[RMDB]
RNA sequence: GGGAACGACUCGAGUAGAGUCGAAAAUCGACGGCCAGUACGACGAACGCAAGAACGACAAGGGUGAAGUGACCUCGCCUGCUCGCAGCAAGAACGUGCUGCAAGAGAAGAUCAUGAAGGCGCUGAACUGGAAGGCGUGCCCGAUCUACGACUACGCUACAAAAUAACCCUUCGGGGUUAUUUUGUAAAAAGAAACAACAACAACAAC
Reactivity to 2A3 in 0.01 (KOAc 150mM, MgCl2 10mM, bicine 150mM(pH8.5), 24C), signal-to-noise 3, nucleotides 027 to 156: u060c010g070a040c020g030g020c050c030a000g020u070a020c060g040a020c050g030a140a000c030g010c060a080a050g100a130a030c030g110a050c150a080a070g040g000g030u040g030a060a020g020u060g090a110c000c020u010c020g020c000c010u030g000c010u000c020g000c010a000g000c020a010a070g080a200a080c130g070u060g000c000u010g000c010a060a000g000a000g000a050a000g000a040u090c070a060u180g110a080a000g010g000c000g000c020u020g020a070a010c030u040g030g030a060a000g030g010c050g000u010g040c000c010c000g030a040u040c030u070a030c030g090a040c050u140a050c190g030c120
Reactivity to DMS in 0.01 (KOAc 150mM, MgCl2 10mM, bicine 150mM(pH8.5), 24C), signal-to-noise 1, nucleotides 027 to 156: u000c020g070a030c020g060g020c000c010a080g000u010a090c040g020a060c010g020a100a120c060g060c070a100a140g060a080a080c030g020a100c050a060a130g020g000g040u010g030a090a200g010u000g000a020c020c010u000c030g010c060c020u000g010c000u010c060g050c010a050g040c000a000a110g020a170a120c100g030u000g030c010u000g000c010a020a010g000a110g000a050a090g000a050u000c010a070u010g000a130a080g010g000c020g000c030u010g010a050a180c130u010g020g020a130a230g030g010c060g050u000g000c010c040c010g010a100u010c030u000a070c030g030a100c050u000a030c060g000c030